RNA sequence: GGGAACGACUCGAGUAGAGUCGAAAAUGGCGUGGGCCAAUAGCUUUGGAAGUCCGGAGUCUAGCAUCUGGUAAACUGCUGCAGGGGACUGGCAGGCCAAGGCUAGAGUCUUUAGGAAUGUGGGACGGGUAGCGAUUAUGUUCGCAUAAUCGCUACCAAAAGAAACAACAACAACAAC
Reactivity to 2A3 in 0.01 (KOAc 150mM, MgCl2 10mM, bicine 150mM(pH8.5), 24C), signal-to-noise 4, nucleotides 027 to 126: u110g050g020c060g080u120g040g060g040c010c020a000a100u140a060g020c040u070u060u120g070g030a100a070g060u020c000c000g010g030a050g090u010c010u040a010g020c000a080u100c050u080g020g000u120a170a220a140c020u010g030c010u060g020c020a080g000g060g000g130a070c030u060g020g020c010a010g000g030c000c000a010a020g010g000c000u010a000g000a020g050u060c010u020u090u070a080g020g050a100a100u110g010u120g020g050g040a030c080g030
Reactivity to DMS in 0.01 (KOAc 150mM, MgCl2 10mM, bicine 150mM(pH8.5), 24C), signal-to-noise 2, nucleotides 027 to 126: u000g010g000c000g040u030g000g010g000c040c040a050a080u010a130g020c130u000u010u020g010g000a050a120g000u020c000c020g050g040a070g010u000c000u020a040g010c000a120u030c040u000g000g000u010a130a090a160c020u000g000c000u020g010c080a120g090g010g020g000a130c080u010g030g000c010a010g000g000c000c030a030a010g000g000c000u020a030g000a070g000u010c000u010u020u000a080g000g010a080a040u000g000u050g010g010g020a190c190g000